[RMDB]
RNA sequence: GGGAACGACUCGAGUAGAGUCGAAAAUUUACGGGCCCGGGACGAGGACCGAAUACACGCGCGCGAGGUCCUCCAGGUAGUACGAACGCGCGCGUGAAUAAUAGUACUACCACCCGGGCCCACCGAACAGGUGGAUUAGAUUCGUCUAAUCCACCUGAAAAGAAACAACAACAACAAC
Reactivity to DMS in 0.01 (KOAc 150mM, MgCl2 10mM, bicine 150mM(pH8.5), 24C), signal-to-noise 2, nucleotides 027 to 126: u010u010u000a110c140g010g010g000c000c000c000g000g000g000a090c060g020a010g030g000a010c010c040g010a080a140u020a110c030a040c000g020c000g000c000g000c030g000a100g000g050u000c010c020u000c030c120a060g010g020u000a000g010u010a000c020g000a110a160c080g000c000g010c000g030c000g010u000g000a070a090u020a110a100u000a110g020u000a000c000u000a010c030c020a300c000c020c010g010g000g030c000c000c000a000c010c010g000a110a190